[RMDB]
Overview:
Conditions: 150 mM KOAc, 10 mM MgCl2 and 150 mM bicine (pH 8.5), 24 C. An RNA of 177 nucleotides, treated with 2A3 and DMS and read out base by base. For 2A3, 35,802 sequencing reads were counted. Values cover nucleotides 27 to 126. Source: RMDB library TTRDES, as collected in RNAgym.
RNA sequence: GGGAACGACUCGAGUAGAGUCGAAAAGAUAUGGACAUCCUAGUCCAGCAUCGAUCACGAGUCGGAAACGACUCGUGGGAGCUGCUAGAGAUGUCCUAAGUCAAAGCAGAUAGCUUCGGCUAUCUGCGAUACGGAUCUUGUUCGCAAGAUCCGUAUCAAAAGAAACAACAACAACAAC
Reactivity to 2A3 in 0.01 (KOAc 150mM, MgCl2 10mM, bicine 150mM(pH8.5), 24C), signal-to-noise 5, nucleotides 027 to 126: g010a010u030a020u070g000g000a000c000a000u000c000c000u020a010g040u140c300c040a000g000c000a040u300c010g040a020u020c000a000c010g000a010g000u010c020g000g010a020a020a010c010g000a000c000u010c010g000u010g000g000g000a010g000c050u120g020c000u010a010g030a020g000a040u000g000u010c000c000u010a030a000g000u000c040a150a110a120g000c000a000g000a000u000a000g000c010u080u120c300g150g000c000u000a000u000c000u000g000c010
Reactivity to DMS in 0.01 (KOAc 150mM, MgCl2 10mM, bicine 150mM(pH8.5), 24C), signal-to-noise 8, nucleotides 027 to 126: g000a030u000a260u010g000g000a010c000a000u000c010c010u000a010g010u040c300c140a030g040c000a260u010c200g000a050u020c000a010c000g000a020g010u000c000g000g000a050a040a110c000g020a010c000u000c000g020u000g000g000g010a010g030c010u000g020c030u010a010g000a220g010a010u000g010u000c000c000u000a000a060g000u000c020a120a120a180g010c000a010g010a010u000a000g010c000u000u020c280g020g000c000u000a000u000c000u000g010c000